Conditions: 150 mM KOAc, 10 mM MgCl2 and 150 mM bicine (pH 8.5), 24 C. Structure probing data (DMS and 2A3) for a 177-nucleotide construct. For DMS, 561 sequencing reads were counted. Values are in units of 0.01, from 0 to 300, in steps of 10.
RNA sequence: GGGAACGACUCGAGUAGAGUCGAAAAGAGCAUGUCUUCGGACAUGCUCAAACGAGAAACGGCAAAUAAGCCGAUCCCAGGCGAUCGUACGCCAUACUCGAAAAAGUAUAGUCUUCGGACUAUACAAGCUUUACCUGAUGUUCGCAUCAGGUAAAGCAAAAGAAACAACAACAACAAC
Reactivity to DMS in 0.01 (KOAc 150mM, MgCl2 10mM, bicine 150mM(pH8.5), 24C), signal-to-noise 1, nucleotides 027 to 126: g000a010g010c000a020u000g000u000c000u000u010c270g000g000a010c020a000u000g000c000u000c000a000a060a100c070g000a030g010a150a080a190c030g000g000c010a180a030a150u000a080a120g000c010c010g100a060u000c010c000c000a210g000g020c020g030a020u030c300g010u050a300c040g010c000c000a020u000a110c010u000c000g010a070a000a070a100a190g000u000a000u000a000g050u020c000u000u000c130g060g010a000c000u000a000u000a000c000a140a050
Reactivity to 2A3 in 0.01 (KOAc 150mM, MgCl2 10mM, bicine 150mM(pH8.5), 24C), signal-to-noise 2, nucleotides 027 to 126: g010a000g000c000a000u010g000u000c020u070u060c250g070g000a010c010a010u000g020c000u010c020a000a000a000c010g000a000g000a050a110a040c040g000g030c050a020a080a300u240a200a090g010c010c010g000a030u030c010c000c000a000g000g000c030g030a090u190c100g030u110a110c060g000c000c000a040u090a030c000u000c000g050a140a060a000a030a000g010u000a000u000a000g000u000c020u020u040c300g070g000a000c000u000a000u000a000c000a000a010

Record summary: DMS (dimethyl sulfate) methylates the pairing face of unpaired adenines and cytosines.